[RMDB]
RNA sequence: GGGAACGACUCGAGUAGAGUCGAAAACAAAACCAGCAUCGAGUGAGACUUGUAAAGAGUAUAACGAAAAGGGUUUUAUCGGAAAAUUGUUUGAUUUUUCUGCACGUGGUUGGUGCGAUUGAUUAAAUGAAGGACAUAUGUUCGCAUAUGUCCUUCAAAAAGAAACAACAACAACAAC
Reactivity to DMS in 0.01 (KOAc 150mM, MgCl2 10mM, bicine 150mM(pH8.5), 24C), signal-to-noise 2, nucleotides 027 to 126: c080a070a040a130a080c040c010a130g010c110a150u000c070g010a140g000u000g000a110g010a070c020u000u010g000u000a070a090a100g010a070g010u000a070u020a180a030c050g010a030a070a090a260g000g020g000u000u000u010u000a060u010c070g000g000a020a050a080a070u000u010g000u000u020u020g000a020u000u010u000u000u010c010u000g030c060a040c030g030u000g020g040u000u010g020g020u000g010c050g010a070u000u010g010a040u010u000a040a080a130